[RMDB]
RNA sequence: GGGAACGACUCGAGUAGAGUCGAAAAUAAGAAAUUCAAGGCAGUGCAAAAUGAUUUAGCUCGUGCCCUUGUUGAUACUGGAACUUUGCGCAAAGAAGAGCUUCCUAUCGGAGCCGGAGAUGAUAUCCACAAAAAGUUAGUUCGCUAACUUUUUGUGAAAAGAAACAACAACAACAAC
Reactivity to 2A3 in 0.01 (KOAc 150mM, MgCl2 10mM, bicine 150mM(pH8.5), 24C), signal-to-noise 2, nucleotides 027 to 126: u130a000a040g080a060a050a030u120u050c010a000a020g000g010c000a010g010u000g000c030a020a130a140a190u210g130a240u120u120u200a040g000c020u020c090g180u050g000c040c000c000u000u030g040u050u050g020a040u040a150c080u060g000g050a040a020c000u080u030u130g010c060g000c030a130a070a060g030a000a020g020a020g020c020u050u040c030c000u080a120u100c040g010g040a020g010c050c010g030g050a070g000a020u050g000a020u010a050u130c040
Reactivity to DMS in 0.01 (KOAc 150mM, MgCl2 10mM, bicine 150mM(pH8.5), 24C), signal-to-noise 4, nucleotides 027 to 126: u020a130a110g000a120a100a140u000u000c030a020a050g000g020c020a080g000u000g000c040a050a060a100a140u010g020a150u010u000u000a180g000c020u010c020g020u000g020c080c020c020u000u000g000u010u000g000a120u010a070c100u000g010g010a050a060c040u000u000u010g020c090g010c070a060a100a150g010a080a070g010a080g020c110u000u000c020c040u010a070u010c040g000g000a220g020c030c030g010g000a070g010a070u000g000a090u000a070u010c100
This 177-nucleotide RNA was probed chemically with 2A3 and DMS. For 2A3, 1,567 sequencing reads were counted. 2A3 adducts were read by reverse transcription with SuperScript II with manganese. For DMS, 3,584 sequencing reads were counted.